[RMDB]
RNA sequence: GGGAACGACUCGAGUAGAGUCGAAAAAGAUAUGGACGGUGCGUAUUUCGCAUCGAUCGUACUGCCUGCUAUAUCGGAAACGAUAUAGCGGAUGUACGGGAGCGAAAUGAUCACCGUCCUAAGUCAAGAAAGCGGUCUAGUUCGCUAGACCGCUUUCAAAAGAAACAACAACAACAAC
Reactivity to DMS in 0.01 (KOAc 150mM, MgCl2 10mM, bicine 150mM(pH8.5), 24C), signal-to-noise 1, nucleotides 027 to 126: a120g020a030u010a300u010g110g000a070c000g030g040u010g030c230g080u040a040u000u000u000c000g000c010a230u000c160g000a010u000c010g030u000a000c000u000g010c090c010u010g040c000u000a010u010a000u010c000g000g000a180a140a220c000g010a010u010a010u000a030g060c000g020g020a070u000g000u000a000c000g000g000g000a020g010c000g010a000a030a030u000g000a120u010c000a030c000c000g010u000c000c020u000a000a030g040u000c020a130a080